[RMDB]
RNA sequence: GGGAACGACUCGAGUAGAGUCGAAAAGAACCGAGAACGGUAAGACGCGCUAUGACAAAAGCAGCAAUAGAUCAUACGCCGCAAGUGGCAAGACGGAGAGCGCGCAAAGCGGUAUGCAAGAGAAGAAACCACUGGAUGGGUUCGCCCAUCCAGUGGUAAAAGAAACAACAACAACAAC
Reactivity to 2A3 in 0.01 (KOAc 150mM, MgCl2 10mM, bicine 150mM(pH8.5), 24C), signal-to-noise 1, nucleotides 027 to 126: g110a030a000c010c000g000a070g010a110a040c040g080g000u060a080a000g000a040c040g000c000g020c040u070a000u230g070a060c110a080a070a170a060g170c050a000g000c000a030a000u100a140g150a000u060c040a030u030a130c100g010c000c010g060c000a060a060g140u070g080g150c070a030a050g030a000c040g050g000a090g000a000g110c150g000c000g000c000a050a050a050g000c000g070g000u000a080u000g000c070a240a020g020a000g030a080a000g000a000a110
Reactivity to DMS in 0.01 (KOAc 150mM, MgCl2 10mM, bicine 150mM(pH8.5), 24C), signal-to-noise 1, nucleotides 027 to 126: g020a020a150c000c010g000a300g100a120a070c230g000g000u060a150a000g000a120c050g130c000g000c180u000a020u000g000a000c080a080a040a000a110g050c060a080g000c000a050a210u040a130g010a040u010c080a000u000a150c290g000c040c140g010c040a000a130g060u130g000g000c040a010a090g000a040c000g000g000a080g000a130g000c090g000c020g060c020a150a070a210g040c010g000g000u110a000u010g020c040a010a000g000a020g000a140a250g020a090a140